The record gives the reactivity of an RNA of 207 nucleotides to DMS and 2A3. Conditions: 150 mM KOAc, 10 mM MgCl2 and 150 mM bicine (pH 8.5), 24 C. The data come from the RNA Mapping Database (RMDB), library OK3TST. Reactivities are given for positions 27 through 156.
RNA sequence: GGGAACGACUCGAGUAGAGUCGAAAAACGUACUCUCGUUCGUGUGUACUCUCGUACGUGUGAUCUCGUUCACACACACGUGUUCGAGAUCGUACUCACACGUUCGAUCGAACGAGUGAACACACGUACGUGAUCACUCGUUCUCACGAUCACGUACCCGUCCUAAAUCUUUCGAGAUUUAGGACGGAAAAGAAACAACAACAACAAC
Reactivity to DMS in 0.01 (KOAc 150mM, MgCl2 10mM, bicine 150mM(pH8.5), 24C), signal-to-noise 1, nucleotides 027 to 156: a020c070g020u000a020c040u010c000u000c020g000u000u010c040g030u000g000u010g020u000a080c080u040c040u010c010g010u000a000c030g000u010g020u000g010a060u000c030u000c050g040u000u000c050a080c000a290c180a190c120a070c130g020u000g000u000u000c030g000a040g030a030u000c040g050u000a080c140u000c040a100c030a020c020g010u000u000c010g020a030u010c050g010a070a100c000g010a070g020u000g040a040a130c090a060c030a120c100g000u010a000c010g050u000g000a030u000c010a040c040u020c040g000u000u000c000u000c030a130c070g000a030u040c020a060c020g020u000a040c040
Reactivity to 2A3 in 0.01 (KOAc 150mM, MgCl2 10mM, bicine 150mM(pH8.5), 24C), signal-to-noise 7, nucleotides 027 to 156: a000c080g030u080a060c020u020c010u000c060g030u020u000c020g000u030g030u040g070u150a110c060u050c020u010c130g000u020a020c010g000u020g050u060g020a030u020c020u010c020g030u050u030c010a030c000a010c000a020c010a010c230g010u010g000u020u030c010g000a000g000a020u030c010g000u040a050c020u010c020a000c000a000c000g010u030u030c010g030a110u090c060g000a000a000c010g000a010g010u010g060a080a010c040a000c010a000c140g070u090a010c070g000u020g000a020u020c010a010c050u030c040g030u040u020c020u020c010a060c060g030a040u050c020a010c050g010u050a030c010